[RMDB]
RNA sequence: GGGAACGACUCGAGUAGAGUCGAAAAAUGGAAGCUGGCAGGAGUGCUGAUGAAGUGCUAUACCACAAUCAGUCGUCAGUAAAGUUAGGUGAGUUAGAAAGAUACGUUAUUACAUAUGAGCUAUACAGUGCUAAAAUUAUUUCGAUAAUUUUAGCACAAAAGAAACAACAACAACAAC
Reactivity to 2A3 in 0.01 (KOAc 150mM, MgCl2 10mM, bicine 150mM(pH8.5), 24C), signal-to-noise 3, nucleotides 027 to 126: a000u090g040g020a070a020g000c020u010g000g000c040a030g030g150a120g040u140g010c010u000g010a040u010g050a120a040g000u010g010c040u100a090u100a160c050c020a010c040a020a010u040c010a010g080u030c010g010u010c010a020g030u120a050a090a010g020u050u050a020g020g050u060g020a060g020u020u070a040g080a080a120a000g020a020u040a050c040g020u070u060a070u110u030a040c020a010u140a060u220g050a030g070c010u110a020u090a160c050a050
Reactivity to DMS in 0.01 (KOAc 150mM, MgCl2 10mM, bicine 150mM(pH8.5), 24C), signal-to-noise 8, nucleotides 027 to 126: a070u000g010g010a120a130g020c070u000g000g030c040a110g020g010a110g040u010g010c020u010g000a050u000g010a130a110g010u000g020c140u000a120u010a120c220c030a040c080a100a060u010c090a020g010u010c060g010u000c020a050g000u010a050a090a090g010u010u000a050g020g000u000g000a060g010u000u000a070g010a080a070a080g000a060u010a050c090g000u000u000a060u010u010a060c080a060u000a060u000g000a110g010c060u000a060u010a090c200a100